[RMDB]
RNA sequence: GGGAACGACUCGAGUAGAGUCGAAAAACUUUUAGCGUUUGCAAGACGCUGUUCUUGCUAUGAUCUGGAUUUAGCGCACGGAGGUCCGAAAUCCAGAUCAACAUUUCGGACCUCCGCGCUAAUAAAACAUGUGCAAAUAGUUCGCUAUUUGCACAUGAAAAGAAACAACAACAACAAC
Reactivity to 2A3 in 0.01 (KOAc 150mM, MgCl2 10mM, bicine 150mM(pH8.5), 24C), signal-to-noise 3, nucleotides 027 to 126: a000c050u200u150u110u150a050g020c020g010u030u110u080g000c000a010a010g010a000c030g110c270u070g080u090u000c010u010u020g010c010u020a090u150g120a150u050c100u100g080g030a070u040u030u030a000g030c000g000c000a020c110g010g010a000g000g000u000c000c010g000a000a010a000u060c080c030a040g010a100u070c000a000a010c010a000u010u000u000c010g000g000a010c000c000u000c000c010g000c000g000c000u010a000a020u010a000a020a000a010
Reactivity to DMS in 0.01 (KOAc 150mM, MgCl2 10mM, bicine 150mM(pH8.5), 24C), signal-to-noise 4, nucleotides 027 to 126: a080c080u000u000u000u010a100g010c020g010u000u000u010g000c070a070a030g000a030c010g000c110u010g010u010u000c020u000u000g000c020u000a040u010g010a100u000c080u000g010g010a200u010u010u000a010g010c000g010c080a080c170g030g010a020g010g010u000c000c000g000a010a010a010u000c130c140a090g000a110u010c160a040a060c150a060u000u000u000c000g010g000a020c000c000u000c000c000g000c000g010c000u000a000a010u000a030a070a070a130

The record gives the reactivity of an RNA of 177 nucleotides to 2A3 and DMS. For DMS, 5,064 sequencing reads were counted. It was measured as part of the RMDB library M2PK90. Conditions: 150 mM KOAc, 10 mM MgCl2 and 150 mM bicine (pH 8.5), 24 C. 2A3 adducts were read by reverse transcription with SuperScript II with manganese.